RNA sequence: GGGAACGACUCGAGUAGAGUCGAAAAUGUGCUAGUUGGAAAUACUGCACCCUCAGGACCUGCUUCCUGACUUGAUGGGCCUGAGGUCACCAAGCAUGGCUCAGCCGUGAAUCACGGAAAAGAAGCGGCCAUUAAGAGCUGGAAAACGGAUUCAGGGUAACUAAAUGCUUUUCGAAGCAUUUAGUUAAAAAGAAACAACAACAACAAC
Reactivity to DMS in 0.01 (KOAc 150mM, MgCl2 10mM, bicine 150mM(pH8.5), 24C), signal-to-noise 3, nucleotides 027 to 156: u000g040u000g010c020u010a090g050u000u020g020g010a230a140a090u000a060c030u000g030c010a110c050c030c010u010c010a030g000g000a020c020c000u010g020c040u000u000c010c030u000g020a050c070u000u010g010a150u000g020g010g000c020c020u010g010a090g010g000u000c010a080c030c020a060a130g020c040a100u010g000g000c010u000c010a170g030c010c000g050u010g010a100a090u000c050a290c050g000g000a120a120a120a130g000a090a300g010c030g020g000c010c050a090u000u020a130a180g010a090g010c000u000g020g000a040a030a070a160c080g010g000a090u000u010c010a050g010g040g010
Reactivity to 2A3 in 0.01 (KOAc 150mM, MgCl2 10mM, bicine 150mM(pH8.5), 24C), signal-to-noise 5, nucleotides 027 to 156: u070g000u020g040c090u120a020g010u020u040g130g060a130a100a070u150a100c010u020g020c000a020c000c000c000u000c020a110g160g030a300c010c000u050g040c030u090u050c010c010u040g040a070c030u080u100g040a110u100g060g010g030c010c010u020g000a000g000g010u040c020a010c060c020a030a010g040c050a080u170g010g000c000u010c020a010g000c000c000g040u020g030a090a090u110c060a050c170g110g000a100a130a090a130g030a090a020g010c000g000g000c010c000a020u070u070a120a040g010a020g010c000u030g050g050a090a140a020a060c100g060g010a050u040u030c000a010g040g000g020